[RMDB]
RNA sequence: GGGAACGACUCGAGUAGAGUCGAAAACGUCGCACCAAGUCGGCCUUGGCAUCGAUGUCCAGGCCGGUCAGCACGAAUGUCAUGGCGUUGCGGAAGCCGCCGAUGCUGUUCAGCGACACCUUGUAGGGGGGAAAGGAAAGUUCGCUUUCCUUUCCCCAAAAGAAACAACAACAACAAC
Reactivity to DMS in 0.01 (KOAc 150mM, MgCl2 10mM, bicine 150mM(pH8.5), 24C), signal-to-noise 2, nucleotides 027 to 126: c250g030u000c010g080c070a190c250c170a100a230g010u000c020g020g000c000c000u000u000g010g000c010a060u050c300g000a160u000g000u000c010c020a030g000g000c000c010g000g000u000c060a120g030c200a060c120g000a070a050u000g000u000c040a060u000g010g010c000g020u000u020g040c030g000g030a150a180g020c020c010g000c000c020g000a000u000g010c000u040g000u010u000c000a130g030c030g020a030c020a160c030c010u000u010g010u000a080g020g020
Reactivity to 2A3 in 0.01 (KOAc 150mM, MgCl2 10mM, bicine 150mM(pH8.5), 24C), signal-to-noise 2, nucleotides 027 to 126: c040g020u000c010g000c030a050c070c080a100a030g060u060c000g000g000c000c000u050u030g000g000c000a050u140c220g300a300u140g000u010c000c000a000g000g000c000c000g000g000u050c000a040g010c050a020c120g020a080a030u110g000u060c040a050u120g010g000c000g140u120u140g000c000g090g070a060a050g000c010c000g020c000c000g020a030u020g000c020u010g010u050u000c020a030g010c010g020a010c020a100c050c000u000u130g190u250a120g030g110
An RNA of 177 nucleotides, treated with DMS and 2A3 and read out base by base. Values are in units of 0.01, from 0 to 300, in steps of 10. The RNA was probed in 150 mM KOAc, 10 mM MgCl2 and 150 mM bicine (pH 8.5) at 24 C.